[RMDB]
An RNA of 177 nucleotides, treated with 2A3 and DMS and read out base by base. The data come from the RNA Mapping Database (RMDB), library RFM100. DMS adducts were read by reverse transcription with MarathonRT.
RNA sequence: GGGAACGACUCGAGUAGAGUCGAAAACUUGGUUAGCUAUUUAGCUUUACUAAUCAAGACGCCGUCGUGCAGCCCACAAAAGUCUAGAUACGUCACAGGAGAGCAUACGCUAGGUCGCGUUGACUAUCAAGGGACGUGAAUUCGUUCACGUCCCUUGAAAAGAAACAACAACAACAAC
Reactivity to 2A3 in 0.01 (KOAc 150mM, MgCl2 10mM, bicine 150mM(pH8.5), 24C), signal-to-noise 2, nucleotides 027 to 126: c020u030u030g000g000u040u030a020g020c070u090a140u100u140u110a090g030c030u030u030u070a020c000u020a000a000u000c010a020a000g030a020c060g010c030c010g130u100c080g050u090g050c050a030g060c010c030c000a020c060a010a060a030a000g000u050c010u030a020g000a010u040a100c030g000u010c020a020c040a050g000g120a070g000a000g070c020a070u050a090c020g010c020u070a110g040g090u080c030g000c000g090u010u020g010a060c030u010a000u070
Reactivity to DMS in 0.01 (KOAc 150mM, MgCl2 10mM, bicine 150mM(pH8.5), 24C), signal-to-noise 1, nucleotides 027 to 126: c010u010u000g000g000u000u000a030g000c190u020a050u000u000u000a160g020c220u000u050u020a220c010u000a100a030u000c000a000a000g000a180c000g040c060c020g090u000c030g010u010g000c070a090g000c020c000c040a090c130a050a030a010a010g000u000c010u010a100g000a060u060a030c030g010u010c010a060c140a090g000g000a150g020a040g060c020a080u000a130c120g000c060u030a000g000g010u000c010g010c030g000u010u010g000a140c000u000a120u000